[RMDB]
RNA sequence: GGGAACGACUCGAGUAGAGUCGAAAACAGUGAUAGCAACAGUCAAACACAAUCUGGAGGAACUGGAGCAAGUUGUUUAUAAGCCCCAGAAGUGUAAGUUGGAUCCAAUAACAAGCCUUUGAGAUUCAGCAAUCAUAGUAUUCGUACUAUGAUUGCUAAAAGAAACAACAACAACAAC
Reactivity to 2A3 in 0.01 (KOAc 150mM, MgCl2 10mM, bicine 150mM(pH8.5), 24C), signal-to-noise 4, nucleotides 027 to 126: c050a010g010u060g200a050u060a060g200c020a030a030c000a030g120u150c120a120a170a030c000a000c010a050a190u000c030u040g010g050a160g050g020a100a010c010u030g000g020a010g010c010a030a080g110u120u050g000u030u030u000a090u020a040a020g000c020c000c000c000a020g000a060a010g040u040g010u100a120a080g020u020u020g010g020a010u000c040c000a030a020u110a100a070c110a140a060g060c010c030u110u110u160g130a120g010a120u180u080c030
Reactivity to DMS in 0.01 (KOAc 150mM, MgCl2 10mM, bicine 150mM(pH8.5), 24C), signal-to-noise 6, nucleotides 027 to 126: c100a110g020u000g020a060u010a060g020c020a030a080c030a110g000u000c170a100a120a070c030a030c040a070a080u010c030u000g000g000a170g000g000a040a090c030u000g000g010a070g010c020a080a140g010u010u010g010u000u000u010a050u010a060a130g000c030c010c010c030a030g010a040a200g030u000g000u010a050a090g010u000u000g010g000a060u000c020c030a060a060u010a060a090c130a090a120g010c070c050u000u000u010g000a130g000a130u000u000c130
Structure probing data (2A3 and DMS) for a 177-nucleotide construct. Source: RMDB library OK2TRN, as collected in RNAgym. For DMS the reverse transcriptase was MarathonRT. Values cover nucleotides 27 to 126. Reactivities are rounded to 0.1 and cut off at 0 and 3. The 2A3 profile rests on 3,200 reads. The reactions ran in a buffer of 150 mM KOAc, 10 mM MgCl2 and 150 mM bicine (pH 8.5), at 24 C.